[RMDB]
RNA sequence: GGGAACGACUCGAGUAGAGUCGAAAAGAAAUACGCUUCGGCGUAUUUCAAAAUGCCAGCUAUGAGGUAAUGUGUCAUAGCAAAAAGAAAAAGAAAAGAAAAAAACGCAUCCCUUCGGGGAUGCGAACCUGAUACUAAUGUUCGCAUUAGUAUCAGGAAAAGAAACAACAACAACAAC
Reactivity to 2A3 in 0.01 (KOAc 150mM, MgCl2 10mM, bicine 150mM(pH8.5), 24C), signal-to-noise 2, nucleotides 027 to 126: g010a000a010a010u010a000c000g020c020u030u090c250g030g000c010g000u010a010u010u000u000c000a020a000a010a000u160g000c000c000a000g000c000u000a000u010g000a000g000g000u120a300a180u210g250u050g010u090c000a000u010a000g000c000a000a000a000a020a020g030a030a020a010a000a010g070a050a060a010a040g100a020a100a020a000a000a000a000c000g010c000a000u000c000c010c000u010u070c230g070g020g010g000a000u000g000c030g000a000a000
Reactivity to DMS in 0.01 (KOAc 150mM, MgCl2 10mM, bicine 150mM(pH8.5), 24C), signal-to-noise 1, nucleotides 027 to 126: g010a030a000a020u000a000c010g000c000u000u010c260g030g010c000g020u000a000u000u000u000c000a050a070a110a130u000g000c010c000a200g010c000u000a000u000g010a000g000g030u000a040a080u010g010u010g000u000c000a000u000a010g020c010a070a030a060a060a050g000a010a030a030a010a050g000a030a020a060a050g010a000a010a140a040a060a010a090c020g030c000a000u000c000c000c000u000u000c210g020g020g010g000a010u010g030c000g000a010a040